[RMDB]
An RNA of 170 nucleotides, treated with 2A3 and DMS and read out base by base.

RNA sequence: GGGAACGACUCGAGUAGAGUCGAAAAUCGGUAAUGGCGAAUGGGACCCAGAAAUCUCUCUAGAUUCCGAUAGAGAAUCGAGAGAAAACUGGCUCUCCCUUAGCCAUCCGAGUGGACGCGCGUCCUCAGGCACGGGCCUUCGGGCCCGUGAAAAGAAACAACAACAACAAC
Reactivity to 2A3 in 0.01 (KOAc 150mM, MgCl2 10mM, bicine 150mM(pH8.5), 24C), signal-to-noise 3, nucleotides 027 to 129: u010c000g050g050u050a040a030u010g010g040c010g030a020a040u040g020g000g000a060c000c000c000a000g010a000a300a000u010c050u000c000u020c040u070a100g000a000u000u000c000c000g190a240u170a080g180a000g000a000a010u000c000g000a000g020a000g000a010a000a000a010c010u000g000g000c010u000c020u000c000c000c000u020u040a020g000c000c000a000u000c000c000g000a000g030u110g000g030a040c040g080c000g000c100g230u050c000c000u040c130a020g010g000
Reactivity to DMS in 0.01 (KOAc 150mM, MgCl2 10mM, bicine 150mM(pH8.5), 24C), signal-to-noise 2, nucleotides 027 to 129: u030c100g020g020u000a150a010u000g000g010c040g020a170a070u000g000g010g020a010c300c000c000a020g010a030a160a090u000c070u020c000u010c020u000a240g060a000u000u020c000c000g100a130u040a000g040a090g000a010a010u000c000g000a040g050a030g010a000a000a060a200c030u040g000g000c040u060c190u010c000c000c040u020u000a160g000c000c000a000u040c020c000g000a000g050u000g020g030a060c040g020c100g080c060g030u000c000c010u000c120a040g000g010

The reactions ran in a buffer of 150 mM KOAc, 10 mM MgCl2 and 150 mM bicine (pH 8.5), at 24 C.